[RMDB]
RNA sequence: GGGAACGACUCGAGUAGAGUCGAAAAGGGUUUUGUGUGGUUCCGUGGUGUCGCGUGGAAGGCGCGUGCGAGCCGAGAGUGAGUGGGAGCGCGAAUGUGUGGCUUGAGUGUGCGGGCGUGGGGCGUGCAGAGCAACCAUGUUCGCAUGGUUGCUCUGAAAAGAAACAACAACAACAAC
Reactivity to 2A3 in 0.01 (KOAc 150mM, MgCl2 10mM, bicine 150mM(pH8.5), 24C), signal-to-noise 3, nucleotides 027 to 126: g090g000g000u080u060u090u060g100u040g050u050g110g000u100u000c040c000g000u090g010g050u060g040u100c010g000c050g000u060g060g050a080a030g040g000c050g000c040g000u020g010c030g010a030g010c000c030g040a040g010a020g050u070g030a000g020u100g010g020g010a070g000c050g000c000g030a140a100u080g040u050g010u040g030g030c000u040u020g020a040g030u100g020u040g000c040g010g020g000c030g000u040g010g000g010g000c040g020u060g010
Reactivity to DMS in 0.01 (KOAc 150mM, MgCl2 10mM, bicine 150mM(pH8.5), 24C), signal-to-noise 1, nucleotides 027 to 126: g000g000g000u000u020u000u000g010u030g000u000g000g030u000u030c040c040g010u000g020g020u000g020u030c050g010c070g050u010g020g010a160a070g020g030c000g020c070g010u020g010c010g030a100g040c000c010g010a070g000a100g010u010g010a110g000u000g000g000g000a080g000c050g000c000g020a010a090u020g030u020g020u000g010g040c060u010u010g010a060g030u020g000u000g000c090g000g000g010c090g030u000g040g000g000g020c050g000u010g030